[RMDB]
RNA sequence: GGGAACGACUCGAGUAGAGUCGAAAAUCAUAUGUUCUCCAUUCAAACUCUAUAUACAAAUCACUAACUUUCAAGUGCCAAUGCCCAUAUAUGUGUUUACUAAUUGUGGACACGUAUAUGCCUAUAAUAGUCACAGAUGGUAGAGUCAUAAAAACGGCCUGAUCAGCAAAUUCGUUUGCUGAUCAGGAAAAGAAACAACAACAACAAC
Reactivity to 2A3 in 0.01 (KOAc 150mM, MgCl2 10mM, bicine 150mM(pH8.5), 24C), signal-to-noise 3, nucleotides 027 to 156: u130c020a020u070a070u220g010u030u000c060u000c110c000a050u190u190c070a040a080a110c050u060c030u070a060u040a050u080a210c130a070a230a100u090c030a030c100u160a260a130c070u040u210u100c070a120a040g010u010g050c020c030a110a080u130g050c040c080c030a030u000a000u000a000u020g050u000g000u030u000u000a030c070u060a140a270u180u180g000u000g000g000a000c000a000c000g000u000a020u000a000u000g000c000c000u050a100u000a090a150u050a030g050u050c070a020c000a080g030a060u030g010g000u040a010g010a000g040u030c020a010u150a060a180a030a010a020c090g110g000
This 207-nucleotide RNA was probed chemically with 2A3. The RNA was probed in 150 mM KOAc, 10 mM MgCl2 and 150 mM bicine (pH 8.5) at 24 C. The data come from the RNA Mapping Database (RMDB), library OK3TST. For 2A3 the reverse transcriptase was SuperScript II with manganese.